The record gives the reactivity of an RNA of 177 nucleotides to 2A3 and DMS.
Conditions: 150 mM KOAc, 10 mM MgCl2 and 150 mM bicine (pH 8.5), 24 C.
For DMS the reverse transcriptase was MarathonRT.
RNA sequence: GGGAACGACUCGAGUAGAGUCGAAAAGAUAUGGACUCCGUAGAGCGCGAACCCAUUCGGAAACGAAUGGUCCCGAACUACGCUCGAGGGAGUCCUAAGUCAAAAGCACCAUGUUCGCAUGGUGCAAGAGUAUCAAUACCUUCGGGUAUUGAUACUCAAAAGAAACAACAACAACAAC
Reactivity to 2A3 in 0.01 (KOAc 150mM, MgCl2 10mM, bicine 150mM(pH8.5), 24C), signal-to-noise 2, nucleotides 027 to 126: g020a000u040a060u090g000g000a010c000u010c020c010g070u070a010g000a000g000c090g030c040g080a080a070c030c000c000a000u000u020c000g040g000a070a090a130c020g030a000a020u010g020g010u090c040c040c000g050a140a050c080u170a060c220g000c010u010c010g020a050g010g000g000a000g010u010c000c000u010a010a000g000u000c010a000a020a010a080g000c000a000c000c000a010u010g040u050u060c290g000c150a010u010g010g000u000g000c000a020a010
Reactivity to DMS in 0.01 (KOAc 150mM, MgCl2 10mM, bicine 150mM(pH8.5), 24C), signal-to-noise 5, nucleotides 027 to 126: g000a040u000a300u010g000g000a020c000u000c000c010g000u000a300g000a010g000c010g010c050g000a100a180c210c010c000a010u000u000c010g010g000a140a090a160c000g010a010a010u000g000g010u010c050c060c030g000a070a110c210u010a080c020g010c000u000c000g000a240g010g000g000a030g010u000c010c000u010a000a070g000u000c040a060a060a130a150g000c010a010c000c000a000u000g010u000u020c190g020c000a010u000g000g000u000g000c000a010a010